[RMDB]
RNA sequence: GGGAACGACUCGAGUAGAGUCGAAAAAGGGUUAGUUUAUUGUGUACCUCUAGAUAUAUAUUCUCUUGCUGCGUAGGGUUCCCAAGCUGCCAAAAACUUUUAAAAAUUAGUGAUCUGUUCCCCAAACCUCGUAAUUGAGAUUCGUCUCAAUUACGAGAAAAGAAACAACAACAACAAC
Reactivity to 2A3 in 0.01 (KOAc 150mM, MgCl2 10mM, bicine 150mM(pH8.5), 24C), signal-to-noise 6, nucleotides 027 to 126: a000g100g020g000u120u080a080g020u090u090u060a150u110u150g020u010g050u050a030c010c010u030c020u060a030g070a050u060a010u060a010u020a080u250u020c020u010c020u050u050g020c030u010g000c020g080u090a040g010g060g000u010u030c000c010c000a000a020g000c010u010g020c010c000a030a050a070a030a090c090u120u150u140u200a090a170a040a060a100u160u130a080g030u030g060a060u020c090u120g010u000u010c010c000c000c010a000a070a070c010
Reactivity to DMS in 0.01 (KOAc 150mM, MgCl2 10mM, bicine 150mM(pH8.5), 24C), signal-to-noise 3, nucleotides 027 to 126: a080g010g000g010u000u010a060g000u010u000u010a050u000u010g020u000g030u020a070c070c010u000c040u010a070g020a080u030a050u030a090u030a080u030u010c010u000c030u000u000g000c020u000g000c030g000u020a060g000g020g000u000u000c010c000c010a090a070g010c050u000g000c010c060a050a040a070a110a050c140u030u020u000u020a000a110a070a090a090u010u000a070g010u000g000a040u010c050u030g010u000u000c000c000c000c110a060a090a100c250
Annotation: Chemical mapping of a 177-nucleotide RNA with 2A3 and DMS. For 2A3 the reverse transcriptase was SuperScript II with manganese.